[RMDB]
Overview:
The record gives the reactivity of an RNA of 177 nucleotides to 2A3 and DMS. Source: RMDB library RFMREP, as collected in RNAgym. For DMS, 911 sequencing reads were counted. Conditions: 150 mM KOAc, 10 mM MgCl2 and 150 mM bicine (pH 8.5), 24 C.
RNA sequence: GGGAACGACUCGAGUAGAGUCGAAAAGGGGUGAACCGGCCCAGGUCGGAAACGGAGCAGGUCAAAACUCCCGUGCUGAUCAGUAGUGGGAUCGCGCCUGUGAAUAGCCACUGCACUCCAGCCUGAGCAAUUACUGACGGUUCGCCGUCAGUAAUUGAAAAGAAACAACAACAACAAC
Reactivity to 2A3 in 0.01 (KOAc 150mM, MgCl2 10mM, bicine 150mM(pH8.5), 24C), signal-to-noise 1, nucleotides 027 to 126: g040g000g000g030u030g010a070a030c030c040g000g000c000c000c000a020g000g050u050c000g030g000a160a070a090c030g030g040a030g030c060a010g000g030u100c040a050a040a020a170c090u010c000c000c000g010u010g010c000u100g080a300u130c130a030g060u070a000g110u070g040g000g000a000u040c040g010c040g000c010c030u040g000u010g070a100a130u110a020g030c020c020a020c070u110g000c020a000c030u000c000c010a040g000c000c000u030g030a080g060
Reactivity to DMS in 0.01 (KOAc 150mM, MgCl2 10mM, bicine 150mM(pH8.5), 24C), signal-to-noise 2, nucleotides 027 to 126: g020g010g010g020u010g020a060a110c060c050g020g010c000c030c110a100g010g030u000c070g000g000a050a100a100c120g000g000a210g000c030a040g010g000u000c100a020a100a110a180c140u010c040c000c040g030u020g000c050u020g000a080u010c070a060g030u000a010g060u020g000g000g000a010u010c090g020c300g000c010c030u000g070u000g000a110a140u040a110g020c010c010a090c100u000g000c050a160c090u000c000c010a010g020c000c000u000g010a080g010